[RMDB]
RNA sequence: GGGAACGACUCGAGUAGAGUCGAAAAGAAUUCGCGGUCAAGUCUUGGGAGGAUCAGAUCUUAGGCGCGCUCGUCGCAGCCCCGGCAACGGUUACAGAUCACGCGAUACUUAAAACAGGGCUUUUAGCUAUUCAGCGGGGUUCGCCCCGCUGAAUAGAAAAGAAACAACAACAACAAC
Reactivity to DMS in 0.01 (KOAc 150mM, MgCl2 10mM, bicine 150mM(pH8.5), 24C), signal-to-noise 1, nucleotides 027 to 126: g000a000a070u000u060c120g000c020g000g070u000c110a060a160g010u000c000u020u000g000g050g000a080g000g000a000u000c020a020g060a200u000c060u000u030a000g000g000c060g000c090g000c070u000c220g080u000c000g000c000a170g050c000c000c090c000g000g000c230a000a110c120g010g000u020u030a000c150a070g010a070u060c120a130c010g050c000g000a030u020a130c110u000u000a070a080a100a050c070a010g000g000g010c020u000u030u000u030a090g000
Reactivity to 2A3 in 0.01 (KOAc 150mM, MgCl2 10mM, bicine 150mM(pH8.5), 24C), signal-to-noise 4, nucleotides 027 to 126: g070a010a110u100u040c030g000c030g030g040u180c030a010a050g000u000c010u090u160g130g080g000a030g070g000a040u040c020a020g010a040u020c000u040u130a080g020g000c030g000c000g010c030u120c120g180u160c010g000c070a060g030c020c010c000c010g020g010c010a060a010c010g010g000u020u020a060c070a050g030a020u030c010a000c040g020c010g030a020u040a080c010u080u180a000a040a090a050c150a050g000g030g000c000u020u040u000u080a030g040
The record gives the reactivity of an RNA of 177 nucleotides to DMS and 2A3. The RNA was probed in 150 mM KOAc, 10 mM MgCl2 and 150 mM bicine (pH 8.5) at 24 C. DMS adducts were read by reverse transcription with MarathonRT. Values cover nucleotides 27 to 126.